An RNA of 177 nucleotides, treated with 2A3 and DMS and read out base by base. Values cover nucleotides 27 to 126. 2A3 adducts were read by reverse transcription with SuperScript II with manganese.

RNA sequence: GGGAACGACUCGAGUAGAGUCGAAAAAAGCCAGAGAGCCAGUCAGAGGGCGCUACCAUGCAAACUAGGGCUGGCUACUCUUGCACAGAAUCACCUUUCUAUAAUAACCAGUGCAAGAAGGGUUAUUGUAUGAUAGACUAUUCGUAGUCUAUCAUACAAAAGAAACAACAACAACAAC
Reactivity to 2A3 in 0.01 (KOAc 150mM, MgCl2 10mM, bicine 150mM(pH8.5), 24C), signal-to-noise 9, nucleotides 027 to 126: a000a000g020c010c000a010g000a000g000a000g010c000c000a000g000u000c000a010g000a000g090g010g000c010g000c000u160a300c050c090a100u300g000c000a010a030a020c000u000a020g010g010g030c000u000g000g000c000u000a010c000u000c000u000u000g000c020a040c020a040g200a070a060u130c020a040c010c000u010u030u000c050u040a150u050a230a100u050a060a050c040c040a070g080u090g200c080a070a020g020a030a010g050g000g000u010u050a070u040u010
Reactivity to DMS in 0.01 (KOAc 150mM, MgCl2 10mM, bicine 150mM(pH8.5), 24C), signal-to-noise 6, nucleotides 027 to 126: a080a080g000c010c070a050g000a030g010a070g000c030c000a010g020u000c000a020g010a030g000g000g020c300g000c000u000a070c300c200a090u040g010c000a030a300a120c000u010a010g020g000g010c000u000g000g010c000u000a020c000u000c010u000u000g010c010a120c130a080g010a080a050u030c120a070c010c010u000u000u010c010u010a090u020a050a060u010a100a160c070c040a100g000u020g000c160a060a040g000a030a020g000g000g000u000u010a060u000u000